RNA sequence: GGGAACGACUCGAGUAGAGUCGAAAAGAUAUGGAUCCUAAGGGAGUGAUGGGCUUCGGAAACGAAGUUAUCACGACGAUCUUAGGAGUCCUAAGUCAAAAGUCACGUUGGUUCGCCAACGUGACAACACUCAGCAUAAGUUCGCUUAUGCUGAGUGAAAAGAAACAACAACAACAAC
Reactivity to 2A3 in 0.01 (KOAc 150mM, MgCl2 10mM, bicine 150mM(pH8.5), 24C), signal-to-noise 4, nucleotides 027 to 126: g010a000u010a010u040g000g000a000u000c000c010u000a000a010g010g010g000a040g030u010g010a010u030g040g260g000c010u000u000c000g000g000a000a010a000c000g000a000a000g020u030u020a010u010c000a010c000g080a060c010g000a010u000c000u000u010a000g010g020a020g030u020c000c000u000a000a000g000u000c010a040a060a050a140g010u000c000a010c020g000u000u010g050g020u050u130c280g090c140c000a000a000c000g000u000g010a000c000a000a000
Reactivity to DMS in 0.01 (KOAc 150mM, MgCl2 10mM, bicine 150mM(pH8.5), 24C), signal-to-noise 5, nucleotides 027 to 126: g010a010u000a020u000g000g000a120u000c000c000u000a000a010g000g010g010a010g020u000g000a010u010g010g010g000c010u000u000c000g020g000a000a010a040c000g010a000a010g010u000u000a000u000c000a000c010g000a100c280g000a030u010c000u000u000a010g000g010a020g020u010c000c000u000a010a100g000u010c000a100a090a090a110g000u000c000a010c000g010u000u000g010g010u000u010c260g000c010c000a000a000c010g010u000g010a000c010a050a090